RNA sequence: GGGAACGACUCGAGUAGAGUCGAAAAUCAAGCCGUUUCGACGGCUUGAACACUUUAGAGUCCUGAGGGACUACGAUCCAGAGUACGGGAGGAACACUAAGGCCUAGCCCUGCUUCGGCAGGGCUAAACCAAUUGAAAGUUUCGACUUUCAAUUGGUAAAAGAAACAACAACAACAAC
Reactivity to DMS in 0.01 (KOAc 150mM, MgCl2 10mM, bicine 150mM(pH8.5), 24C), signal-to-noise 6, nucleotides 027 to 126: u000c000a010a010g000c000c000g020u000u000u010c180g010a030c010g000g000c000u000u000g010a020a070c130a090c080u000u000u010a080g000a090g010u000c010c010u000g020a180g030g010g000a040c020u000a040c100g000a100u000c050c030a110g000a080g020u000a070c110g010g000g010a060g000g000a050a060c100a110c060u000a050a060g000g010c030c040u000a020g010c000c000c000u000g000c000u000u010c190g030g010c000a010g010g000g020c000u000a000a030
Reactivity to 2A3 in 0.01 (KOAc 150mM, MgCl2 10mM, bicine 150mM(pH8.5), 24C), signal-to-noise 2, nucleotides 027 to 126: u030c010a010a010g010c000c000g000u030u040u110c170g090a010c000g030g000c010u000u000g000a000a000c010a000c010u150u120u090a060g020a010g110u050c000c000u020g040a210g010g060g040a020c030u060a070c150g090a080u030c020c030a030g000a010g130u030a090c070g030g000g010a030g020g030a010a010c050a000c080u050a090a030g030g040c000c020u020a000g000c000c000c000u010g000c020u030u030c080g030g000c020a030g050g020g000c000u020a020a040
Chemical mapping of a 177-nucleotide RNA with DMS and 2A3.
DMS adducts were read by reverse transcription with MarathonRT.
It was measured as part of the RMDB library M2PK50.
The 2A3 profile rests on 2,184 reads.